Chemical mapping of a 207-nucleotide RNA with DMS and 2A3.
The RNA was probed in 150 mM KOAc, 10 mM MgCl2 and 150 mM bicine (pH 8.5) at 24 C.
For 2A3, 3,934 sequencing reads were counted.
As a SHAPE reagent, 2A3 marks flexible, mostly unpaired nucleotides at the ribose 2'-OH.
High DMS reactivity at an A or C suggests that its Watson-Crick edge is free.
RNA sequence: GGGAACGACUCGAGUAGAGUCGAAAACGGCAUGAUUGACGCCCGACUCCACAAGGACGCAUUCGACACCUACGACGUUGACGAACACACCCAAGGGUUCGACAUCAACAAAUUCGUCCACGGCGUCAGACGGGCGCGUGUGAACUCUGACGACGAAAUUAUAGACUCACUUCGGUGAGUCUAUAAUAAAAGAAACAACAACAACAAC
Reactivity to DMS in 0.01 (KOAc 150mM, MgCl2 10mM, bicine 150mM(pH8.5), 24C), signal-to-noise 3, nucleotides 027 to 156: c060g010g030c050a090u010g000a150u010u010g020a110c030g020c000c000c000g020a140c060u030c050c030a070c070a160a240g020g000a090c020g000c050a170u000u010c040g000a140c060a110c050c010u000a120c000g020a080c110g020u000u010g000a110c070g030a070a110c060a080c100a130c050c030c080a030a210g000g020g020u000u010c000g020a140c060a120u000c040a040a060c030a040a080a230u010u010c020g000u000c040c020a160c050g000g000c020g050u000c020a020g010a060c060g020g010g030c030g010c060g040u000g000u000g010a050a110c060u030c030u010g000a060c020g000a090c020g000a110a080
Reactivity to 2A3 in 0.01 (KOAc 150mM, MgCl2 10mM, bicine 150mM(pH8.5), 24C), signal-to-noise 5, nucleotides 027 to 156: c030g050g000c050a050u110g050a180u160u170g040a050c020g000c000c030c010g080a070c060u050c060c040a080c050a110a090g040g000a010c010g030c040a050u100u100c040g080a050c060a150c070c090u140a080c100g070a010c100g010u010u010g000a010c020g010a010a000c050a010c000a050c070c050c060a060a090g080g010g000u000u020c030g050a060c060a130u060c000a000a030c010a000a060a030u070u030c020g000u000c020c010a020c050g030g000c010g010u010c020a010g010a040c040g000g000g000c030g000c020g020u110g040u040g040a060a050c020u040c050u100g080a010c050g010a000c020g030a110a120